Background: The record gives the reactivity of an RNA of 207 nucleotides to 2A3. The reactions ran in a buffer of 150 mM KOAc, 10 mM MgCl2 and 150 mM bicine (pH 8.5), at 24 C. It was measured as part of the RMDB library M2RFPK. Reactivities are given for positions 27 through 156.
RNA sequence: GGGAACGACUCGAGUAGAGUCGAAAAAGAUCGAUUACGAUCGAUCAAUGAUGCCACUCACCCACCUCUGAAGAUCCCAGGUGGGCGAGGGAACGGAGCACGGGAUCACGAGCAGUACGCUGCUCGAAAAAGAACUAGACCUUCGGGUCUAGUUCAAGUCUCUCCAUGCGUUCGCGCAUGGAGAGACAAAAGAAACAACAACAACAAC
Reactivity to 2A3 in 0.01 (KOAc 150mM, MgCl2 10mM, bicine 150mM(pH8.5), 24C), signal-to-noise 1, nucleotides 027 to 156: a000g000a000u000c000g000a010u090u070a050c280g100a000u000c000g000a000u010c030a010a180u150g060a060u150g050c000c000a050c000u010c000a010c000c000c000a000c000c000u090c040u090g090a080a010g020a030u020c000c000c000a000g020g000u010g000g000g000c000g000a010g020g030g030a020a100c140g100g090a050g090c240a050c090g010g020g000a000u000c040a000c000g000a000g050c000a000g000u030a010c210g020c110u000g000c000u000c000g000a000a000a000a020a040g020a010a000c000u000a000g000a000c000c000u090u100c230g000g000g000u000c000u000a000g000u000u000c000a000a010